[RMDB]
RNA sequence: GGGAACGACUCGAGUAGAGUCGAAAACAGAUGGGACUGUCCAAGCAAGAUCAGCUACCAGGGAUCUGUAUCAGGCAAGGUGGCUGCCUGCUGGAGGGGCUCUGGGAUCUGGGGUUGAAGAGGGGUCAUCCCUAUUGCCUUUCGAGGCAAUAGGGAUAAAAGAAACAACAACAACAAC
Reactivity to DMS in 0.01 (KOAc 150mM, MgCl2 10mM, bicine 150mM(pH8.5), 24C), signal-to-noise 1, nucleotides 027 to 126: c060a110g000a060u020g000g010g000a120c080u000g010u020c010c010a090a130g020c080a050a030g030a090u000c030a000g010c020u000a040c010c030a200g010g030g000a070u000c040u010g000u030a090u020c060a070g020g000c050a200a140g020g010u000g000g000c030u000g010c180c010u000g010c040u000g010g020a060g000g010g000g000c050u010c000u000g020g000g020a040u010c050u000g000g000g000g000u000u000g030a090a080g040a130g050g010g020g000u000c110
Structure probing data (DMS) for a 177-nucleotide construct.
For DMS, 1,254 sequencing reads were counted.
For DMS the reverse transcriptase was MarathonRT.
It was measured as part of the RMDB library OK2TRN.